Conditions: 150 mM KOAc, 10 mM MgCl2 and 150 mM bicine (pH 8.5), 24 C. Structure probing data (2A3 and DMS) for a 207-nucleotide construct. The 2A3 profile rests on 2,023 reads. For 2A3 the reverse transcriptase was SuperScript II with manganese.
RNA sequence: GGGAACGACUCGAGUAGAGUCGAAAACAGAUUUCGAGAGGAAUUUGGGAUAUCAAAAGGUAUCAGACGCUACAAGUACAGAUCGGUCGAAGUAAGACGUAGCGCAGGAUUGUUGAGUUCUACGGGAGUGGUCCAGCAAUGCUGAACGAUCGUACCAUAAUAGAUAUUUAUUCGUAAAUAUCUGUUAAAAAGAAACAACAACAACAAC
Reactivity to 2A3 in 0.01 (KOAc 150mM, MgCl2 10mM, bicine 150mM(pH8.5), 24C), signal-to-noise 3, nucleotides 027 to 156: c020a010g030a040u040u060u070c110g020a060g010a030g000g050a050a020u040u060u070g050g020g020a020u030a020u080c060a080a150a150a150g080g020u060a040u060c020a050g020a090c030g000c000u020a000c010a090a110g020u020a030c030a050g020a020u010c020g020g050u000c020g020a120a000g090u110a040a070g030a010c020g010u010a000g000c010g000c020a000g000g040a040u010u010g010u010u020g040a110g110u120u030c010u010a020c010g040g020g030a140g030u020g000g020u000c010c000a000g020c010a040a000u110g170c000u020g010a060a030c030g010a010u000c000g000u010a010c020c000a020
Reactivity to DMS in 0.01 (KOAc 150mM, MgCl2 10mM, bicine 150mM(pH8.5), 24C), signal-to-noise 3, nucleotides 027 to 156: c010a070g020a040u010u000u000c000g020a300g000a300g010g000a000a020u000u000u010g030g000g010a080u000a020u000c020a050a110a120a240g020g030u010a030u000c030a150g010a090c030g020c000u000a030c010a050a120g010u010a080c030a100g010a050u000c020g020g020u000c020g010a090a170g000u000a060a110g020a120c070g040u000a040g020c010g030c010a090g010g000a040u000u000g010u000u000g000a130g020u010u000c020u000a070c020g030g050g010a200g020u000g000g010u010c120c000a020g010c010a050a020u000g010c000u000g010a020a050c020g000a040u000c040g020u010a100c060c040a300